This 170-nucleotide RNA was probed chemically with DMS and 2A3. The RNA was probed in 150 mM KOAc, 10 mM MgCl2 and 150 mM bicine (pH 8.5) at 24 C. It was measured as part of the RMDB library 15KLIB. High 2A3 reactivity points to a flexible backbone, as in loops and unpaired stretches. Values cover nucleotides 27 to 129.
[RMDB]
RNA sequence: GGGAACGACUCGAGUAGAGUCGAAAACUCGGAUGUUCCCCAGCCAGGGAUUGUCCUCCUCGAGUCUCUUGAGAUUCUUGUUGACCUUCCGGAGCUCCCUCUCGAGUUCCUCCUUUCUUCUUCUUCCUCAGUACUCACUUCGGUGAGUACAAAAGAAACAACAACAACAAC
Reactivity to DMS in 0.01 (KOAc 150mM, MgCl2 10mM, bicine 150mM(pH8.5), 24C), signal-to-noise 8, nucleotides 027 to 129: c000u010c030g030g000a070u030g000u020u010c030c010c020c080a080g020c030c070a080g020g020g030a110u020u030g000u060c030c020u000c060c040u020c050g020a080g030u020c010u030c050u040u040g000a080g000a090u030u030c050u000u040g050u020u010g020a100c050c090u030u000c040c050g020g010a120g000c080u000c040c040c020u030c000u050c060g000a050g030u020u020c060c030u050c060c030u040u030u010c040u050u020c000u020u030c040u000u000c010c000u000c080a130
Reactivity to 2A3 in 0.01 (KOAc 150mM, MgCl2 10mM, bicine 150mM(pH8.5), 24C), signal-to-noise 9, nucleotides 027 to 129: c010u010c030g020g030a080u110g030u050u020c010c000c000c000a010g060c020c010a030g020g030g030a040u040u110g060u060c010c010u020c010c000u010c020g020a040g050u000c010u010c010u060u120g070a060g010a130u120u050c030u070u110g080u070u080g050a060c010c000u030u030c020c020g020g000a010g020c010u020c010c000c000u030c010u020c020g030a020g010u030u040c000c000u030c010c010u050u070u030c010u030u000c000u050u010c000u030u010c010c010u050c020a010